[RMDB]
RNA sequence: GGGAACGACUCGAGUAGAGUCGAAAAGCACAAACUUUAGAAUCAAGUCAUUCUGGGCUCAAUUACAGUUCAGCCACCAAUUAUCUGUUAUUUUGAGCAAUCACAACUUCUUUGAAACUUAGUUUCUCAAGUUUCAAAUGCAAAUGACACCUGUCUACUUUUAUGGCCUAUUCGUAGGCCAUAAAAGAAAAGAAACAACAACAACAAC
Reactivity to 2A3 in 0.01 (KOAc 150mM, MgCl2 10mM, bicine 150mM(pH8.5), 24C), signal-to-noise 3, nucleotides 027 to 156: g010c010a010c010a060a030a020c050u100u110u050a040g010a030a020u070c050a070a020g010u010c020a060u110u090c070u080g010g100g000c000u020c000a000a050u050u040a020c000a000g020u050u140c060a080g070c070c030a100c030c060a120a100u180u050a030u080c010u000g050u050u050a130u040u130u010u040g010a020g020c020a050a050u130c050a040c020a130a080c040u200u080c030u060u080u020g010a020a000a000c000u020u030a030g050u090u190u000c060u030c010a000a030g020u000u000u000c010a040a020a020u070g000c010a030a010a100u060g040a040c010a040c140c040u040g020u060c030u090a070
The record gives the reactivity of an RNA of 207 nucleotides to 2A3. The RNA was probed in 150 mM KOAc, 10 mM MgCl2 and 150 mM bicine (pH 8.5) at 24 C. The data come from the RNA Mapping Database (RMDB), library OK3TST.